[RMDB]
RNA sequence: GGGAACGACUCGAGUAGAGUCGAAAAGGAGGGUUGGCUUCGUCAUCAACACACACAGUUUAUAAUAACUGGCAAAUCAAACAAUAAUUUCGCAGUAGCUGCCUAAUCGCACUCUGCAUCGCCUAACAGCAUUUCCUAUGUGCUGUUAACGCGAUUCGAGUAUAGCCCUCUUCGGAGGGCUAUACUCAAAAGAAACAACAACAACAAC
Reactivity to 2A3 in 0.01 (KOAc 150mM, MgCl2 10mM, bicine 150mM(pH8.5), 24C), signal-to-noise 1, nucleotides 027 to 156: g010g000a010g070g000g010u060u090g000g030c010u010u000c030g130u000c020a080u030c010a000a100c000a000c000a000c000a000c010a060g000u020u000u040a300u040a300a000u090a060a030c000u010g120g000c040a000a040a110u130c030a240a160a050c070a010a010u130a090a040u210u140u110c120g050c000a000g090u290a020g010c160u010g030c000c000u030a030a050u110c000g030c040a000c000u070c020u090g000c000a020u020c000g000c000c000u000a000a000c010a000g000c000a010u000u000u260c040c070u090a040u300g020u000g010c000u010g000u010u000a040a000c000g000c000g020a000u110u080c000